[RMDB]
RNA sequence: GGGAACGACUCGAGUAGAGUCGAAAAUAAGAGUAUUUUGGAGAAAGAGAUGGUAGGCAGUUUCGUAUUCGAAGCCGAAUUGCGGCAUCAAUUGGGCAAAGGGGCAUCCCGCCGCCUGCGUCAUGCGCGAUGAGAUAACAUUCGUGUUAUCUCAUCGAAAAGAAACAACAACAACAAC
Reactivity to 2A3 in 0.01 (KOAc 150mM, MgCl2 10mM, bicine 150mM(pH8.5), 24C), signal-to-noise 6, nucleotides 027 to 126: u150a020a030g060a020g070u090a120u060u160u140u140g070g020a080g040a030a090a020g050a020g010a020u070g030g030u050a040g060g000c030a020g020u030u060u140c040g010u030a110u060u120c090g050a060a020g030c020c010g020a020a010u080u080g040c010g030g000c010a020u040c020a090a120u100u110g060g010g000c010a060a050a010g030g010g000g010c010a040u050c010c000c000g020c020c020g080c010c010u030g000c020g060u050c030a040u160g050c100g000
Reactivity to DMS in 0.01 (KOAc 150mM, MgCl2 10mM, bicine 150mM(pH8.5), 24C), signal-to-noise 9, nucleotides 027 to 126: u000a070a090g000a100g010u000a050u010u000u000u010g010g010a090g010a060a080a080g010a080g010a050u000g010g010u000a050g010g020c040a060g000u000u000u000c060g010u000a130u000u000c100g010a060a110g000c030c010g000a070a090u000u000g010c050g000g010c050a060u000c040a040a070u000u000g010g010g010c040a040a180a080g010g010g000g010c080a090u010c030c020c020g010c060c050g010c030c020u000g000c300g000u000c080a050u000g010c140g020